Structure probing data (2A3 and DMS) for a 177-nucleotide construct. Source: RMDB library M2PK50, as collected in RNAgym. For 2A3, 3,124 sequencing reads were counted.
RNA sequence: GGGAACGACUCGAGUAGAGUCGAAAAUCUAACUUCUUCGGAAGUUAGAAAAUAAAAUCAGCGGUAAAUAUCGAGGCGUAAUUACCGGUGAACGCCUCGAUAAAAGAUUGUGCUUCGGCACAAUCAACCUUCACUACAUGUUCGCAUGUAGUGAAGGAAAAGAAACAACAACAACAAC
Reactivity to 2A3 in 0.01 (KOAc 150mM, MgCl2 10mM, bicine 150mM(pH8.5), 24C), signal-to-noise 2, nucleotides 027 to 126: u000c000u000a000a000c010u000u000c000u040u030c170g100g000a000a000g010u000u010a000g000a000a000a000a000u060a010a040a000a060u130c030a010g060c040g150g060u100a100a150a080u100a050u030c000g010a010g000g000c010g010u000a080a040u100u050a080c030c020g030g030u050g050a020a000c020g000c000c000u000c000g000a000u000a000a000a000a000g000a000u000u010g010u000g000c000u010u050c200g130g000c000a000c010a000a000u000c000a000a000
Reactivity to DMS in 0.01 (KOAc 150mM, MgCl2 10mM, bicine 150mM(pH8.5), 24C), signal-to-noise 1, nucleotides 027 to 126: u000c020u010a000a000c000u000u000c010u000u000c230g020g000a020a020g010u000u000a010g000a010a020a040a110u000a050a050a130a090u020c050a060g010c070g000g010u010a090a040a140u000a010u010c000g010a000g000g020c010g020u000a040a060u000u010a130c040c050g000g000u010g000a120a030c010g000c000c000u000c010g000a000u000a000a020a100a110g000a010u000u000g010u000g000c000u000u030c170g020g000c000a020c000a020a000u000c000a120a130